[RMDB]
Chemical mapping of a 207-nucleotide RNA with DMS and 2A3. In probing experiments dimethyl sulfate is read out at A N1 and C N3, which are open when not base-paired. For 2A3 the reverse transcriptase was SuperScript II with manganese. Values cover nucleotides 27 to 156.
RNA sequence: GGGAACGACUCGAGUAGAGUCGAAAAGCUAUGUUACGAUUAUGUGACUUGGCAUAAUCGGAGGUACUCGACUCCGUAACAUAGGUCGAGUGGCUGUCCGUACUGCCAAGUCACAGUACGACAGUCGUCGAGUCCUGACUGUGACAGCCCUCAGGAACCUAUCAUGCUAGUUCGCUAGCAUGAUAGGAAAAGAAACAACAACAACAAC
Reactivity to DMS in 0.01 (KOAc 150mM, MgCl2 10mM, bicine 150mM(pH8.5), 24C), signal-to-noise 3, nucleotides 027 to 156: g030c050u020a040u000g020u000u000a090c010g010a100u000u020a070u020g040u030g030a150c090u010u000g010g070c000a030u010a110a080u000c030g000g010a300g060g000u000a060c060u000c030g030a030c000u000c050c050g000u000a110a140c150a140u010a060g010g000u010c030g000a070g010u000g020g010c000u000g010u000c000c040g020u030a110c260u010g000c020c020a100a100g040u000c030a000c000a010g000u000a020c050g010a160c070a080g020u020c020g000u000c040g000a180g020u000c020c030u000g000a040c040u000g020u010g000a160c090a100g010c000c030c000u000c040a060g030g000a120a240
Reactivity to 2A3 in 0.01 (KOAc 150mM, MgCl2 10mM, bicine 150mM(pH8.5), 24C), signal-to-noise 3, nucleotides 027 to 156: g060c060u090a050u150g060u110u110a040c040g040a100u080u040a060u120g000u000g000a010c000u000u000g000g000c010a010u060a030a060u090c000g000g000a000g020g020u000a000c000u000c010g000a000c010u070c120c060g120u090a080a060c070a120u200a070g010g010u000c000g000a000g010u010g080g000c020u090g270u070c010c000g000u030a030c050u000g000c000c000a000a010g000u000c000a000c010a000g000u000a000c030g010a010c020a060g050u030c010g030u010c030g080a000g070u020c010c010u040g030a030c020u010g060u100g100a020c060a030g040c000c000c010u040c020a010g020g040a030a030